[RMDB]
RNA sequence: GGGAACGACUCGAGUAGAGUCGAAAAAGCACAGAGGUAUUAGGAAACGGGGGACCUAACAGGACAGAGGGUGAACGUAAAGGGGGUCACAGCAUCACAGCGCAGCCUCUGCCCAGAGAGCUGCCAGGAAGUAAGUAGGAUUCGUCCUACUUACUUCAAAAGAAACAACAACAACAAC
Reactivity to DMS in 0.01 (KOAc 150mM, MgCl2 10mM, bicine 150mM(pH8.5), 24C), signal-to-noise 9, nucleotides 027 to 126: a080g020c070a080c090a070g000a080g010g010u010a080u000u000a100g000g000a040a060a080c120g010g010g010g000g010a120c050c030u000a050a070c140a090g000g000a080c100a060g010a100g010g010g020u010g010a050a070c130g010u010a030a080a100g010g010g000g010g010u010c060a050c110a070g000c080a040u000c120a090c170a090g000c140g010c010a020g010c010c000u000c000u010g000c040c040c050a210g000a020g000a110g010c010u000g010c010c080a090g010
Reactivity to 2A3 in 0.01 (KOAc 150mM, MgCl2 10mM, bicine 150mM(pH8.5), 24C), signal-to-noise 4, nucleotides 027 to 126: a000g120c080a070c020a020g070a030g040g030u100a110u140u200a100g070g050a130a140a070c080g010g000g010g030g020a010c010c010u030a070a020c030a050g000g060a020c020a030g050a090g010g040g000u080g060a060a020c040g030u120a060a050a080g010g010g010g000g010u020c030a020c010a100g050c010a010u090c020a030c040a060g040c050g000c100a000g030c000c000u000c010u020g070c010c000c000a020g010a000g000a010g000c000u010g000c000c000a010g070